[RMDB]
RNA sequence: GGGAACGACUCGAGUAGAGUCGAAAAGCGUACUACCUUGCUUUUGACGCUCCUCAAAGUGGCGAUAAGUCCCAAAUAGGACUUUUGACGCCAAUGAAGGGAGCGAUAAGCAAGGUAUCGCAAAAGAUUGCACUAGCCUUCGGGCUAGUGCAAUCAAGUAUCGUUCAAGGUUCGCCUUGAACGAUACAAAAGAAACAACAACAACAAC
Reactivity to 2A3 in 0.01 (KOAc 150mM, MgCl2 10mM, bicine 150mM(pH8.5), 24C), signal-to-noise 3, nucleotides 027 to 156: g030c010g090u150a160c040u000a000c030c000u010u000g020c000u050u070u020u200g130a100c020g010c010u030c000c000u110c030a090a130a040g030u030g000g010c010g020a040u020a110a010g000u020c030c030c060a190a290a130u300a100g000g000a000c000u050u020u040u120g170a150c020g000c030c010a010a020u060g000a060a050g000g000g020a000g000c000g010a000u020a000a000g000c000a000a000g000g000u010a000u020c000g000c000a000a060a000a020g010a000u010u000g010c000a000c000u010a000g000c000c010u040u090c290g020g000g010c000u000a000g000u010g000c010a000a010u000c000a000a000
Reactivity to DMS in 0.01 (KOAc 150mM, MgCl2 10mM, bicine 150mM(pH8.5), 24C), signal-to-noise 1, nucleotides 027 to 156: g030c010g050u010a120c110u000a020c010c010u000u020g010c000u000u000u010u020g010a260c110g050c030u000c000c000u000c030a050a300a110g000u010g060g000c000g060a190u010a030a010g010u000c000c000c000a030a140a200u010a050g020g000a070c000u000u000u050u000g030a170c000g010c010c000a020a060u000g000a300a070g000g000g030a030g040c010g010a020u020a010a070g000c030a000a030g000g010u000a000u000c000g000c030a050a080a090a110g000a020u000u030g030c000a020c030u010a010g000c010c000u010u000c300g080g010g010c000u000a010g010u010g030c020a000a020u020c000a050a170

Source: RMDB library RNAMAK, as collected in RNAgym.
Chemical mapping of a 207-nucleotide RNA with 2A3 and DMS.
For DMS, 2,098 sequencing reads were counted.
2A3 adducts were read by reverse transcription with SuperScript II with manganese.
For 2A3, 2,697 sequencing reads were counted.
Conditions: 150 mM KOAc, 10 mM MgCl2 and 150 mM bicine (pH 8.5), 24 C.
For DMS the reverse transcriptase was MarathonRT.